[RMDB]
Source: RMDB library OK1LIB, as collected in RNAgym.
This 177-nucleotide RNA was probed chemically with 2A3.
The 2A3 profile rests on 264 reads.
The reactions ran in a buffer of 150 mM KOAc, 10 mM MgCl2 and 150 mM bicine (pH 8.5), at 24 C.
RNA sequence: GGGAACGACUCGAGUAGAGUCGAAAAGGUUGUAGACAUAAACAGGCCUCUAUCCAACGAACCCUUGUUUAAUAUGAUGCUGUCUUCCUGAUUGAAACCGCUAAAUGUCAUGAUGGCUACGACGGGACAGGACCAUCGGAUUCGUCCGAUGGUCCUGAAAAGAAACAACAACAACAAC
Reactivity to 2A3 in 0.01 (KOAc 150mM, MgCl2 10mM, bicine 150mM(pH8.5), 24C), signal-to-noise 1, nucleotides 027 to 126: g010g000u000u000g000u000a120g200a000c050a030u300a090a020a020c000a000g050g300c000c000u000c030u000a000u060c070c070a030a030c000g000a000a090c030c000c000u050u210g090u140u300u000a030a030u140a140u090g300a100u030g000c000u050g000u000c070u000u000c000c000u050g090a300u270u000g000a000a000a000c210c000g000c040u000a190a090a070u100g000u100c070a000u100g090a020u000g000g070c030u030a030c000g210a000c000g000g020g000a000